[RMDB]
Source: RMDB library OK3TST, as collected in RNAgym.
This 207-nucleotide RNA was probed chemically with 2A3 and DMS.
Values are in units of 0.01, from 0 to 300, in steps of 10.
The RNA was probed in 150 mM KOAc, 10 mM MgCl2 and 150 mM bicine (pH 8.5) at 24 C.
2A3 adducts were read by reverse transcription with SuperScript II with manganese.

RNA sequence: GGGAACGACUCGAGUAGAGUCGAAAAUGAAAACAGAUGAUCGCACCGUCGUGGCUGUGCGAACCGCAAUAGGCGUUUCAGUAGCCAUCGGGCUUGUGAGUCUAAUCAUAGCCCUCAUGUGGUGGCUGCUGGCCAAAUAACGAUCGACACCAUGAACGCGAACUCAUAAGUUCGCUUAUGAGUUCGCAAAAGAAACAACAACAACAAC
Reactivity to 2A3 in 0.01 (KOAc 150mM, MgCl2 10mM, bicine 150mM(pH8.5), 24C), signal-to-noise 7, nucleotides 027 to 156: u130g040a030a010a020a010c080a040g120a080u120g020a080u110c050g000c060a020c010c040g040u060c030g020u060g070g000c100u030g020u060g030c020g020a030a050c080c020g040c070a100a150u100a200g050g000c050g030u050u150u230c020a000g000u010a000g000c000c000a010u030c030g000g000g010c030u210u210g030u020g030a020g060u120c150u280a090a070u020c000a000u010a010g000c000c040c000u080c060a150u200g170u250g070g000u000g000g000c000u000g000c000u000g000g000c000c010a040a070a030u140a040a030c040g030a050u060c040g050a030c000a020c080c020a030u120g040a050a020c070
Reactivity to DMS in 0.01 (KOAc 150mM, MgCl2 10mM, bicine 150mM(pH8.5), 24C), signal-to-noise 1, nucleotides 027 to 156: u010g010a120a020a080a210c060a100g030a060u010g010a190u000c080g050c050a160c050c050g010u000c050g020u000g000g000c000u000g000u000g020c100g030a110a030c030c020g030c050a120a140u000a220g040g010c060g000u000u000u010c040a110g050u000a060g020c000c030a030u000c040g020g000g000c000u000u000g050u010g020a080g000u000c160u000a120a120u000c000a060u000a020g030c010c020c000u010c100a090u030g030u000g040g020u000g000g000c000u010g000c060u000g000g110c040c050a030a100a140u020a110a100c030g030a060u000c000g020a060c000a040c020c020a020u030g000a120a190c160